[RMDB]
RNA sequence: GGGAACGACUCGAGUAGAGUCGAAAAAUGGACCUGGAUCUAGAGAUGAAGCACAACGUAUCCUCAGUGUUUACCGUAGUUGAAGAGGGAUUAUUCGGAAGAACAUAUACCGUCUGGAGAUCCGAUGACCACUAAUCUCUUUCGAGAGAUUAGUGGUAAAAGAAACAACAACAACAAC
Reactivity to 2A3 in 0.01 (KOAc 150mM, MgCl2 10mM, bicine 150mM(pH8.5), 24C), signal-to-noise 5, nucleotides 027 to 126: a000u090g070g030a050c020c010u040g030g010a010u030c010u010a040g020a020g010a130u040g050a060a050g070c040a030c020a100a090c050g060u060a070u090c030c000u050c050a050g050u020g070u130u060u060a070c020c040g070u090a080g060u070u160g090a140a030g040a050g060g060g010a050u090u060a090u160u090c030g000g040a070a060g030a140a000c050a010u140a000u030a180c010c020g020u000c020u040g100g030a030g000a010u000c000c010g030a050u090g030
Reactivity to DMS in 0.01 (KOAc 150mM, MgCl2 10mM, bicine 150mM(pH8.5), 24C), signal-to-noise 7, nucleotides 027 to 126: a110u010g000g010a130c050c030u000g030g000a020u000c010u000a220g010a060g010a050u000g010a110a110g010c080a050c090a070a100c130g020u000a070u000c050c020u010c100a130g010u010g000u000u000u000a080c060c080g020u000a080g010u000u000g010a080a100g000a090g010g010g000a080u000u000a100u000u010c020g010g030a100a100g010a040a040c080a040u010a080u010a090c060c020g010u000c020u000g010g000a060g000a040u000c010c010g020a110u010g010